[RMDB]
RNA sequence: GGGAACGACUCGAGUAGAGUCGAAAACGCAAUGCUGAGUUCGCUCCUUUUGUAAAGAAAUUGUCUGCCAAACUUCGCAAUCUUGGCAUUUCUAAUAAAAUAGACGAUUCUAAUGCCAAUAUUGGCCGUCGCUAUGCUCGUAACGAUGAAUUGGGAAUCGAGCAUUUAAUUUCGAUUAAAUGCUCGAAAAAGAAACAACAACAACAAC
Reactivity to DMS in 0.01 (KOAc 150mM, MgCl2 10mM, bicine 150mM(pH8.5), 24C), signal-to-noise 2, nucleotides 027 to 156: c070g010c090a120a080u010g020c000u000g010a030g000u000u010c040g030c020u000c040c010u000u000u000u040g020u020a080a160a180g010a060a090a100u000u000g020u000c050u020g050c050c020a050a070a090c090u020u000c090g000c060a050a050u000c030u000u000g030g010c000a050u000u010u000c020u000a120a160u000a090a040a120a260u000a150g000a170c120g010a100u000u020c030u010a050a040u000g030c000c010a020a040u000a040u000u000g000g020c020c040g020u000c010g000c000u010a020u000g010c160u000c150g000u000a040a050c030g000a050u000g010a070a150u000u000g010g000g010a120a210
Reactivity to 2A3 in 0.01 (KOAc 150mM, MgCl2 10mM, bicine 150mM(pH8.5), 24C), signal-to-noise 4, nucleotides 027 to 156: c080g000c030a020a030u050g000c050u020g010a010g060u140u080c020g000c020u050c000c000u060u050u050u120g150u140a140a110a040g030a060a140a060u130u070g030u020c010u030g030c000c020a070a120a110c090u100u070c070g010c050a040a060u000c020u000u010g000g000c010a000u000u050u060c030u020a110a150u100a240a210a070a040u090a040g070a090c060g040a030u150u050c080u160a070a050u050g000c000c000a040a050u060a060u060u060g000g030c000c000g020u030c000g000c030u020a040u100g020c030u030c090g060u080a060a040c020g040a040u080g040a040a110u100u050g020g000g130a040a040
Conditions: 150 mM KOAc, 10 mM MgCl2 and 150 mM bicine (pH 8.5), 24 C. Structure probing data (DMS and 2A3) for a 207-nucleotide construct. Values cover nucleotides 27 to 156. The data come from the RNA Mapping Database (RMDB), library OK3TST. High 2A3 reactivity points to a flexible backbone, as in loops and unpaired stretches.